[RMDB]
RNA sequence: GGGAACGACUCGAGUAGAGUCGAAAAGACAAAUGUGUGUCCAACUGGAACCAGUGUUACGAAUCGUGACGCCACGCAAGCACUCCCAAAUGCUUCCAUCAAGCGUCUUCAAGGUACACCUUAUCUCUCACAGCUUGCGCGCUACUUCUCCCAGUGGCUGCUUUAGCCUCUUCGGAGGCUAAAGCAGAAAAGAAACAACAACAACAAC
Reactivity to 2A3 in 0.01 (KOAc 150mM, MgCl2 10mM, bicine 150mM(pH8.5), 24C), signal-to-noise 2, nucleotides 027 to 156: g040a020c030a000a210a070u070g050u020g000u000g020u000c010c000a090a070c100u070g040g020a040a040c040c020a040g000u030g020u080u080a040c060g090a190a220u190c120g020u070g000a020c000g040c030c000a020c060g060c050a000a010g000c000a010c020u050c030c000c000a060a060a010u110g000c000u030u000c050c000a160u100c130a120a000g000c020g010u010c050u080u030c080a090a020g020g030u030a080c000a060c060c000u120u140a090u070c070u020c000u010c020a040c010a090g000c000u020u090g000c040g030c060g000c040u080a080c020u020u050c020u000c060c010c000a020g030u020g090g010
Reactivity to DMS in 0.01 (KOAc 150mM, MgCl2 10mM, bicine 150mM(pH8.5), 24C), signal-to-noise 1, nucleotides 027 to 156: g040a150c050a050a080a120u000g020u000g060u000g010u010c000c010a090a060c040u000g030g020a180a090c030c080a150g020u000g010u010u010a080c030g020a070a070u010c090g020u020g000a050c050g030c030c000a080c050g010c070a030a040g040c110a070c050u010c110c050c070a090a090a050u000g000c010u000u000c030c050a180u000c090a100a170g000c030g000u000c050u000u000c090a110a070g000g000u000a050c080a060c010c030u000u000a070u000c030u000c000u000c000a040c000a080g000c000u000u000g030c110g000c100g030c020u000a030c010u040u010c000u000c020c000c020a130g000u000g000g010